Chemical mapping of a 177-nucleotide RNA with DMS and 2A3.
It was measured as part of the RMDB library M2PK50.
2A3 adducts were read by reverse transcription with SuperScript II with manganese.

RNA sequence: GGGAACGACUCGAGUAGAGUCGAAAACUACGAUGCUUCGGCAUCGUAGAAAGAAAACACAAGACGAAUGCGCUGAAAAACGUCUUGAGACAGCGCAAAGAAAAACUUGGUUCUUCGGAACCAAGAAUCUGUGCUUAAUGUUCGCAUUAAGCACAGAAAAAGAAACAACAACAACAAC
Reactivity to DMS in 0.01 (KOAc 150mM, MgCl2 10mM, bicine 150mM(pH8.5), 24C), signal-to-noise 1, nucleotides 027 to 126: c000u000a010c010g000a000u010g030c000u000u020c220g030g000c000a000u000c000g000u000a000g030a110a060a120g000a090a030a020a110c210a060c050a030a030g000a000c010g030a150a150u000g040c010g000c020u000g010a050a040a130a130a140c050g000u000c020u000u020g000a100g000a070c020a060g010c000g030c000a070a100a090g010a060a040a060a090a040c000u000u000g000g010u000u000c010u000u020c230g030g000a000a000c000c000a010a000g000a090a090
Reactivity to 2A3 in 0.01 (KOAc 150mM, MgCl2 10mM, bicine 150mM(pH8.5), 24C), signal-to-noise 2, nucleotides 027 to 126: c000u000a000c000g000a000u000g000c010u060u070c180g110g000c000a000u000c030g010u020a020g000a000a000a000g010a010a060a010a000c190a010c020a070a000g020a000c010g060a240a140u090g010c000g000c030u040g040a090a000a010a010a010c020g000u020c050u010u040g010a020g060a000c050a030g030c000g060c050a030a100a000g030a000a090a010a010a020c010u020u010g010g020u000u030c010u050u030c090g130g000a020a000c040c030a010a000g000a000a000